RNA sequence: GGGAACGACUCGAGUAGAGUCGAAAAUCUGUCGUAGGAGAGAUGGCGCCAAAUGCAAUCAUAUUGGUUUGGUACUAAUUAUGGUAGAAUUAAAGCUAAGCCAAUUUGGGCACCGGGUUUCAUCUCUGCAAGUCCAUAUAUUCGUAUAUGGACUUGCAAAAGAAACAACAACAACAAC
Reactivity to 2A3 in 0.01 (KOAc 150mM, MgCl2 10mM, bicine 150mM(pH8.5), 24C), signal-to-noise 4, nucleotides 027 to 126: u010c010u040g190u120c120g130u150a050g010g160a010g010a000g010a030u000g000g000c010g030c010c000a050a070a020u090g000c040a030a160u130c000a020u010a000u030u000g000g000u000u000u000g020g020u040a030c060u020a060a030u060u050a100u230g300g010u120a110g170a160a020u020u050a050a050a020g010c000u010a000a000g000c010c000a010a010u020u040u040g030g010g010c020a010c040c090g040g000g000u010u000u000c000a010u000c010u010c000u000
Reactivity to DMS in 0.01 (KOAc 150mM, MgCl2 10mM, bicine 150mM(pH8.5), 24C), signal-to-noise 2, nucleotides 027 to 126: u010c000u000g000u040c010g020u020a100g020g010a090g000a010g010a010u000g000g020c110g020c010c000a050a170a300u020g000c000a070a120u020c000a000u020a060u000u000g030g010u000u010u000g000g000u020a070c300u000a020a000u040u000a040u020g010g040u070a070g000a000a030u000u000a010a210a300g000c000u000a000a020g020c020c000a000a000u000u000u000g000g000g000c000a090c300c300g010g000g000u000u020u000c010a040u010c000u000c010u000